Record summary
An RNA of 177 nucleotides, treated with 2A3 and DMS and read out base by base. The reactions ran in a buffer of 150 mM KOAc, 10 mM MgCl2 and 150 mM bicine (pH 8.5), at 24 C. For DMS the reverse transcriptase was MarathonRT. It was measured as part of the RMDB library 15KREP.
[RMDB]
RNA sequence: GGGAACGACUCGAGUAGAGUCGAAAACCCAGGUCGGACCGCGAGGAGGUGGAGAUGCCAUGCCGACCCGAAGAGGAAAGAAGGACGCGAGACGCGAACCUGUGAGUGGAAACCCGCUUUAUUCACUCUAAUAAGGGAACUUCGGUUCCCUUAUUAGAAAAGAAACAACAACAACAAC
Reactivity to 2A3 in 0.01 (KOAc 150mM, MgCl2 10mM, bicine 150mM(pH8.5), 24C), signal-to-noise 2, nucleotides 027 to 126: c000c000c020a020g010g050u050c020g000g040a070c010c010g010c030g020a090g070g010a010g020g070u060g020g010a140g000a070u070g010c020c010a070u070g010c010c010g030a030c000c000c000g060a050a040g050a030g030g060a110a000a040g020a040a030g050g010a010c010g090c010g080a120g010a070c120g050c030g060a070a150c000c000u020g000u040g060a030g040u010g100g020a090a000a050c010c010c000g040c040u060u130u050a180u030u070c020a020c050u000
Reactivity to DMS in 0.01 (KOAc 150mM, MgCl2 10mM, bicine 150mM(pH8.5), 24C), signal-to-noise 2, nucleotides 027 to 126: c010c010c000a150g000g010u000c020g000g030a190c030c090g020c070g000a090g010g020a130g000g030u010g000g000a090g000a130u000g000c050c040a070u000g020c030c000g020a120c030c020c040g010a090a030g010a110g000g000a050a070a050g030a090a080g010g000a150c070g030c050g030a150g010a100c080g010c030g010a080a090c040c030u000g030u010g000a050g000u010g000g000a060a050a110c040c020c020g020c190u020u000u000a060u010u000c040a110c070u010